[RMDB]
RNA sequence: GGGAACGACUCGAGUAGAGUCGAAAAAAUGUUGUGGAAGGGAACAAAACAACCCAGACGCAGCACAGCGAGCUGGAGGUAGCUGUACUUCUAAGCAGUUUCUCGUCGAAGAUCUGGGAGAAGAGAAUACGUUAGGGAACUUCGGUUCCCUAACGUAAAAAGAAACAACAACAACAAC
Reactivity to DMS in 0.01 (KOAc 150mM, MgCl2 10mM, bicine 150mM(pH8.5), 24C), signal-to-noise 1, nucleotides 027 to 126: a100a040u010g000u000u000g000u000g050g020a150a140g000g040g000a040a050c080a060a050a080a060c130a140a110c030c010c000a090g000a250c010g000c080a020g090c120a020c110a040g020c000g000a070g000c070u000g010g000a010g020g000u000a070g010c230u000g020u000a060c040u000u000c040u020a050a080g000c040a170g000u010u000u000c010u000c040g020u000c050g000a010a090g010a100u000c000u000g020g010g010a110g010a110a020g040a130g000a130a140

The record gives the reactivity of an RNA of 177 nucleotides to DMS. The reactions ran in a buffer of 150 mM KOAc, 10 mM MgCl2 and 150 mM bicine (pH 8.5), at 24 C. DMS adducts were read by reverse transcription with MarathonRT. It was measured as part of the RMDB library OK2TST. The DMS profile rests on 687 reads.